[RMDB]
RNA sequence: GGGAACGACUCGAGUAGAGUCGAAAACUGUGUCUAUAUCUCGGCAUCUUGCUUAGUCUGGCACAUCUAAGUGCGCGAAGAGCAUUGCUGAUCAAGGGCUUCUGACUAUGUGCCGCUUGCCGUGCUAAUUAAAUACGGUCUUCGGACCGUAUUUAAUAAAAGAAACAACAACAACAAC
Reactivity to 2A3 in 0.01 (KOAc 150mM, MgCl2 10mM, bicine 150mM(pH8.5), 24C), signal-to-noise 3, nucleotides 027 to 126: c010u050g030u010g050u090c080u100a140u000a090u220c020u010c050g000g030c010a020u000c070u090u110g050c030u040u070a020g030u010c070u130g030g000c000a010c000a030u010c060u070a140a040g020u040g080c120g010c050g090a090a090g040a030g080c020a050u030u150g020c080u080g050a100u100c040a050a050g030g070g000c000u080u000c040u070g070a080c010u050a050u130g050u020g020c010c010g010c020u010u010g010c030c010g000u020g000c020u090a090
Reactivity to DMS in 0.01 (KOAc 150mM, MgCl2 10mM, bicine 150mM(pH8.5), 24C), signal-to-noise 6, nucleotides 027 to 126: c060u010g020u010g000u010c050u000a070u000a060u010c040u000c040g010g000c030a040u010c120u000u000g020c030u000u000a060g010u000c050u000g000g000c010a020c030a070u010c100u000a110a050g020u000g020c060g020c160g000a090a110g010a070g010c020a090u000u010g020c100u000g020a100u000c090a060a130g010g010g010c020u000u000c060u000g010a080c120u010a030u010g000u000g000c030c060g010c100u000u000g020c040c060g030u000g020c120u010a090
Conditions: 150 mM KOAc, 10 mM MgCl2 and 150 mM bicine (pH 8.5), 24 C. Chemical mapping of a 177-nucleotide RNA with 2A3 and DMS. DMS adducts were read by reverse transcription with MarathonRT.